[RMDB]
The record gives the reactivity of an RNA of 177 nucleotides to 2A3 and DMS. The RNA was probed in 150 mM KOAc, 10 mM MgCl2 and 150 mM bicine (pH 8.5) at 24 C. Values are in units of 0.01, from 0 to 300, in steps of 10. For 2A3 the reverse transcriptase was SuperScript II with manganese. The DMS profile rests on 3,413 reads.
RNA sequence: GGGAACGACUCGAGUAGAGUCGAAAAUUUUUGGGACCAGACCUGUUUUUGUGCAGGCAUACGGAGCUGAUUCUAGCUCAGAACAAGUUGUAGUUGAGCCUAACACAGUAAUUGGAGCAAUGCCAAAUACUAUGAUUCGUUUCGACGAAUCAUAGUAAAAAGAAACAACAACAACAAC
Reactivity to 2A3 in 0.01 (KOAc 150mM, MgCl2 10mM, bicine 150mM(pH8.5), 24C), signal-to-noise 2, nucleotides 027 to 126: u140u090u030u040u000g000g010g080a070c000c040a020g070a160c040c000u050g050u020u080u030u170u070g100u070g010c050a080g020g040c020a060u100a140c050g030g090a000g010c000u020g060a300u260u010c080u300a020g000c020u050c020a020g050a040a000c080a090a080g050u100u060g030u150a100g010u040u040g060a040g000c000c000u040a070a040c060a000c010a030g040u120a060a060u090u090g020g000a060g010c030a040a020u090g070c000c000a030a070a010
Reactivity to DMS in 0.01 (KOAc 150mM, MgCl2 10mM, bicine 150mM(pH8.5), 24C), signal-to-noise 2, nucleotides 027 to 126: u000u020u000u010u020g000g030g000a120c040c000a050g000a060c020c030u000g000u000u000u060u010u000g040u000g010c180a030g000g010c070a130u000a040c210g000g000a020g030c030u000g000a090u030u030c130u020a050g010c060u010c000a200g020a040a110c160a110a120g000u010u000g000u000a060g000u020u000g010a020g000c030c050u000a050a020c050a040c130a050g020u040a020a070u010u010g010g000a050g010c110a080a120u010g000c000c000a020a020a080